[RMDB]
RNA sequence: GGGAACGACUCGAGUAGAGUCGAAAAUUAUGGAAGGGUUUCAAGUUGAGCAGUGACCUGCCCUGGUUCAUCUGGAAGAUCUCUCCAGCUGCCGUGUGAAGAAUUGGCUGUGGGUACCAGACAUCAUGCCAUGCUGGCAGUGCAUCGAGAGACGGUGGUACAUCUUAACUUUCGAGUUAAGAUGUACAAAAGAAACAACAACAACAAC
Reactivity to DMS in 0.01 (KOAc 150mM, MgCl2 10mM, bicine 150mM(pH8.5), 24C), signal-to-noise 4, nucleotides 027 to 156: u000u000a100u000g000g020a090a050g000g030g020u000u000u000c040a120a110g020u000u010g020a100g020c050a130g020u010g000a090c070c010u000g000c040c020c020u000g000g010u000u000c040a050u010c020u000g010g000a100a100g010a070u000c010u010c010u000c010c020a300g010c010u010g020c000c010g000u000g030u000g010a090a090g000a070a100u000u000g000g000c010u000g020u000g010g010g020u010a100c110c020a080g000a040c020a040u000c050a130u010g030c030c020a050u000g010c040u010g010g000c020a030g020u000g000c050a090u000c050g010a070g020a050g000a030c030g010g030u010g010
Reactivity to 2A3 in 0.01 (KOAc 150mM, MgCl2 10mM, bicine 150mM(pH8.5), 24C), signal-to-noise 7, nucleotides 027 to 156: u100u040a060u130g040g020a010a030g080g040g010u030u080u110c100a050a060g040u070u100g080a020g030c030a010g020u010g110a050c010c000u020g030c000c000c000u020g030g030u030u070c050a080u010c050u040g060g030a090a030g120a280u020c010u000c000u000c010c010a020g000c000u010g000c000c020g100u080g010u060g110a120a150g030a110a230u100u030g020g000c020u030g020u080g040g070g000u050a110c040c010a030g060a130c020a050u120c020a020u180g030c020c000a020u080g030c040u060g010g000c010a010g000u020g030c030a110u100c060g020a010g000a000g000a040c020g030g040u090g040
Structure probing data (DMS and 2A3) for a 207-nucleotide construct. It was measured as part of the RMDB library OK3TST. The reactions ran in a buffer of 150 mM KOAc, 10 mM MgCl2 and 150 mM bicine (pH 8.5), at 24 C. The DMS profile rests on 13,543 reads. For DMS the reverse transcriptase was MarathonRT. For 2A3, 6,368 sequencing reads were counted.